[RMDB]
RNA sequence: GGGAACGACUCGAGUAGAGUCGAAAAGAUAUGGAAGGCGAUGAAACCUUGUGCGACGAAGCAACAGAGGGAUCUCGGAAACGAGAUCCCUCUGUUGCAGAGCACUGGGUGGAGCCUUCCUAAGUCACAAUUACCUUAUCUUCGGAUAAGGUAAUUGAAAAGAAACAACAACAACAAC
Reactivity to DMS in 0.01 (KOAc 150mM, MgCl2 10mM, bicine 150mM(pH8.5), 24C), signal-to-noise 2, nucleotides 027 to 126: g000a070u000a300u010g000g010a030a000g020g010c010g040a120u010g010a200a190a070c000c000u030u010g020u000g000c010g030a250c260g010a180a140g000c000a000a010c000a010g000a080g060g000g010a020u000c000u000c050g010g010a070a070a230c030g080a030g000a010u000c020c010c000u000c000u000g000u010u000g060c000a000g000a280g000c010a000c020u000g000g010g000u000g000g000a150g010c000c010u010u000c000c000u000a010a040g010u000c050a260
Structure probing data (DMS) for a 177-nucleotide construct. Conditions: 150 mM KOAc, 10 mM MgCl2 and 150 mM bicine (pH 8.5), 24 C. DMS (dimethyl sulfate) methylates the pairing face of unpaired adenines and cytosines.